[RMDB]
This 207-nucleotide RNA was probed chemically with DMS and 2A3.
The reactions ran in a buffer of 150 mM KOAc, 10 mM MgCl2 and 150 mM bicine (pH 8.5), at 24 C.
For DMS the reverse transcriptase was MarathonRT.
Source: RMDB library ARCHII, as collected in RNAgym.
For 2A3 the reverse transcriptase was SuperScript II with manganese.
For 2A3, 4,426 sequencing reads were counted.
RNA sequence: GGGAACGACUCGAGUAGAGUCGAAAAGUGUUGACGCUUGGGUUCUACGCAACGAAAACCCACGAACCCUGUCAGGUCCGGAAGGAAGCAGCAGUAAGUGGCCCCUUUCGUGUGCCGUAGAGUCGCCUGGGCCGAGCUAACUGCUCAGGUAACGCCUCACCUAGAUUAUGUUCGCAUAAUCUAGGUGAAAAGAAACAACAACAACAAC
Reactivity to DMS in 0.01 (KOAc 150mM, MgCl2 10mM, bicine 150mM(pH8.5), 24C), signal-to-noise 1, nucleotides 027 to 156: g030u000g040u000u000g010a140c060g000c010u020u000g020g030g010u000u000c000u000a030c000g060c010a090a040c000g000a030a060a070a110c120c020c010a080c030g020a180a110c030c080c010u000g040u010c070a080g030g000u000c040c010g030g030a170a190g040g010a060a210g000c000a070g020c030a060g040u000a040a300g030u000g040g030c000c070c060c060u010u000u000c020g020u010g040u010g000c050c030g040u010a060g040a140g040u000c030g040c020c000u000g030g000g010c000c090g020a070g000c150u010a050a120c030u000g030c010u020c010a020g010g040u000a040a090c050g000c020c020u010
Reactivity to 2A3 in 0.01 (KOAc 150mM, MgCl2 10mM, bicine 150mM(pH8.5), 24C), signal-to-noise 4, nucleotides 027 to 156: g060u030g020u080u070g050a070c090g020c110u080u110g070g010g000u090u000c000u010a000c010g000c010a020a000c000g010a010a010a000a020c030c000c000a010c010g020a020a040c070c000c020u010g050u090c010a020g010g030u000c000c010g100g140a130a070g050g010a020a010g000c010a000g000c010a000g000u060a150a010g010u020g030g010c010c000c000c020u000u020u000c050g010u150g160u060g130c100c030g000u000a000g000a000g010u050c010g000c000c000u000g000g000g000c010c010g050a050g080c120u120a130a180c030u060g000c000u000c010a000g040g000u030a110a010c070g020c020c000u010